[RMDB]
RNA sequence: GGGAACGACUCGAGUAGAGUCGAAAAGUGGAAACCCCAGCGCGAAAUGAAAGUGAAGGGCAGCGUAAGUUGUCUGAGGUAGGAAAUGCUGCGGGCUUCGGUCUGCGGUGUGGCACUAUCGACCGAUCAUAGAUAGGGUGUUCGCACCCUAUCUAUGAAAAGAAACAACAACAACAAC
Reactivity to DMS in 0.01 (KOAc 150mM, MgCl2 10mM, bicine 150mM(pH8.5), 24C), signal-to-noise 2, nucleotides 027 to 126: g030u010g020g000a060a120a120c040c010c000c040a140g010c110g010c030g020a040a070a080u010g000a060a090a100g010u020g010a100a230g010g000g010c020a040g000c030g010u020a090a100g000u000u000g020u030c040u000g010a040g020g010u000a030g010g000a150a070a020u000g010c040u000g000c020g020g010g000c010u000u010c160g030g010u000c010u000g020c010g020g010u000g020u000g000g010c190a110c020u000a020u000c020g010a100c080c030g010a170u010
Reactivity to 2A3 in 0.01 (KOAc 150mM, MgCl2 10mM, bicine 150mM(pH8.5), 24C), signal-to-noise 1, nucleotides 027 to 126: g160u100g090g020a020a080a030c000c000c000c000a060g000c110g000c030g060a160a050a120u190g070a190a050a070g080u110g110a040a120g010g000g000c000a000g000c000g050u060a110a140g030u090u030g010u000c020u020g000a010g030g000u000a000g000g000a000a160a040u030g030c000u000g010c040g020g000g000c020u030u140c200g020g020u000c000u000g000c030g060g000u020g000u030g040g000c020a020c100u040a030u050c010g030a080c030c010g030a020u000
An RNA of 177 nucleotides, treated with DMS and 2A3 and read out base by base. The data come from the RNA Mapping Database (RMDB), library RFMREP. High DMS reactivity at an A or C suggests that its Watson-Crick edge is free. The reactions ran in a buffer of 150 mM KOAc, 10 mM MgCl2 and 150 mM bicine (pH 8.5), at 24 C. For DMS the reverse transcriptase was MarathonRT.